[RMDB]
RNA sequence: GGGAACGACUCGAGUAGAGUCGAAAAAAUUAGAGAAGGUACACUAGUGGGUUUUACAGUGAAGAAGGUAAGAAAAAGAGUUACAGAUGAAUAUGUGUUUUUAUGGCCUUGCUUAUAUUUUAAACACACCUUGGCAACUUAUCAUGGAAGAGGGGUAACUCAUCAUUGGUUUCGACCAAUGAUGAGUAAAAGAAACAACAACAACAAC
Reactivity to DMS in 0.01 (KOAc 150mM, MgCl2 10mM, bicine 150mM(pH8.5), 24C), signal-to-noise 2, nucleotides 027 to 156: a030a100u000u000a060g010a090g020a150a010g010g030u000a110c070a040c020u000a070g020u000g010g030g030u000u000u000u000a070c060a030g060u010g000a110a060g010a060a020g020g010u010a040a110g010a050a110a100a090a080g000a130g010u000u000a080c050a160g010a090u010g020a070a090u000a070u000g010u000g000u010u010u000u000u000a110u000g010g010c010c080u000u010g030c010u000u000a140u020a070u010u020u010u020a040a060a110c020a030c080a010c030c080u000u000g020g020c050a080a030c050u000u000a060u020c070a100u000g010g010a050a050g000a040g010g000g070g010u010a020
Reactivity to 2A3 in 0.01 (KOAc 150mM, MgCl2 10mM, bicine 150mM(pH8.5), 24C), signal-to-noise 3, nucleotides 027 to 156: a000a020u300u180a050g000a040g000a100a020g020g010u110a050c040a010c070u080a050g020u100g030g060g020u050u150u000u080a070c030a030g040u030g070a030a010g020a020a000g040g000u070a030a050g020a050a060a010a000a010g040a010g010u060u070a020c030a020g080a090u090g020a160a030u080a070u130g040u010g020u000u000u030u060u020a060u070g020g010c040c110u080u060g010c030u260u010a080u040a060u170u170u040u120a010a080a000c040a000c000a010c010c000u010u000g030g000c000a030a000c010u060u080a070u170c100a070u080g010g010a030a010g000a030g030g030g010g010u020a020

Chemical mapping of a 207-nucleotide RNA with DMS and 2A3. It was measured as part of the RMDB library OK3TST. For 2A3, 1,124 sequencing reads were counted. For DMS, 2,669 sequencing reads were counted. The reactions ran in a buffer of 150 mM KOAc, 10 mM MgCl2 and 150 mM bicine (pH 8.5), at 24 C.